[RMDB]
RNA sequence: GGGAACGACUCGAGUAGAGUCGAAAAGCCCAACUGCCAAGUUUGGAGAGCACUCCGGCCCGUAUGGUUGAGUAGCUCCCAGAGGGAGGAAUCCACGCGGAGUAGAACGGAAAAAUCACCUCCAGAGCCAGAAGUAUUACUUCGGUAAUACUUCUGGAAAAGAAACAACAACAACAAC
Reactivity to DMS in 0.01 (KOAc 150mM, MgCl2 10mM, bicine 150mM(pH8.5), 24C), signal-to-noise 3, nucleotides 027 to 126: g000c020c000c000a140a140c140u000g000c070c110a130a090g020u000u000u010g020g000a050g000a070g000c090a080c100u000c010c080g010g010c040c000c270g000u010a070u000g010g020u010u030g000a090g000u010a140g010c010u000c000c010c000a090g030a090g020g010g000a020g000g000a170a100u010c010c010a030c100g000c090g000g010a100g020u010a100g010a090a090c100g000g000a010a050a090a080a090u000c090a130c080c000u000c030c020a080g020a100g010
Reactivity to 2A3 in 0.01 (KOAc 150mM, MgCl2 10mM, bicine 150mM(pH8.5), 24C), signal-to-noise 2, nucleotides 027 to 126: g050c000c000c020a000a060c090u120g040c020c040a100a090g060u050u100u080g100g010a130g000a000g050c040a010c070u010c030c000g000g060c010c000c030g160u130a070u210g050g010u040u030g030a070g070u140a060g050c000u010c000c000c010a050g050a120g010g020g000a020g020g060a100a060u000c020c000a020c020g050c010g020g090a110g050u090a030g050a090a010c050g000g030a090a090a070a000a030u100c030a050c020c000u000c030c010a010g020a020g060